[RMDB]
RNA sequence: GGGAACGACUCGAGUAGAGUCGAAAAGGCCGGGACUAUUGCACACGCAGCGUGACACGCUGCCUUUCUGAAAAUUCAGAUGGUCUGUUUCAAGUUGGUUGGGUGGCCGAGUUUGUCUGCGAUAGACCUUAGCUGACCUUUUCGAAGGUCAGCUAAGAAAAGAAACAACAACAACAAC
Reactivity to DMS in 0.01 (KOAc 150mM, MgCl2 10mM, bicine 150mM(pH8.5), 24C), signal-to-noise 2, nucleotides 027 to 126: g030g020c040c030g010g010g000a090c030u020a040u030u010g050c110a070c150a130c190g030c020a010g020c000g000u010g000a200c140a300c080g000c010u000g030c020c080u010u000u000c040u020g000a020a090a080a110u010u010c030a060g010a140u010g010g010u000c030u010g000u010u010u000c070a080a060g000u010u010g010g020u000u000g010g010g010u010g030g020c020c020g020a120g010u000u010u000g010u020c070u000g020c070g030a100u000a050g000a020c050